[RMDB]
RNA sequence: GGGAACGACUCGAGUAGAGUCGAAAAGAUAUGGACUCGGCUAGAUCGUAUUCGGAAACGAAUACAGAUCUUGGACCCGAGGUCCUAAGUCAAAACUACGCGUCACUGUUCGCAGUGACGCGUAGAAGCAUGAAUAGCAGUUCGCUGCUAUUCAUGCAAAAGAAACAACAACAACAAC
Reactivity to DMS in 0.01 (KOAc 150mM, MgCl2 10mM, bicine 150mM(pH8.5), 24C), signal-to-noise 2, nucleotides 027 to 126: g000a030u000a300u020g000g000a280c000u000c010g020g020c030u010a030g010a000u000c010g000u000a000u000u000c010g000g000a100a060a180c010g000a030a010u000a000c010a140g020a010u000c000u000u010g020g010a100c300c010c000g010a000g000g010u010c000c010u000a030a100g010u020c040a050a120a150a220c000u000a010c000g020c000g050u000c000a020c000u000g000u000u020c210g010c000a010g000u000g000a000c000g010c010g000u000a000g000a030a130
Reactivity to 2A3 in 0.01 (KOAc 150mM, MgCl2 10mM, bicine 150mM(pH8.5), 24C), signal-to-noise 1, nucleotides 027 to 126: g010a010u040a040u170g000g020a010c000u000c010g000g040c020u000a020g000a010u040c000g010u010a000u000u010c040g020g020a070a060a040c050g010a020a010u010a020c100a090g000a030u020c010u020u060g040g080a090c000c000c040g010a030g040g070u020c000c000u020a070a060g030u020c050a040a010a090a180c000u010a000c010g000c030g000u010c000a010c030u000g120u140u140c300g000c230a010g000u000g000a030c020g010c000g000u000a000g000a000a000

Structure probing data (DMS and 2A3) for a 177-nucleotide construct.
For DMS, 1,630 sequencing reads were counted.
It was measured as part of the RMDB library TTRDEL.
Reactivities are given for positions 27 through 126.
Values are in units of 0.01, from 0 to 300, in steps of 10.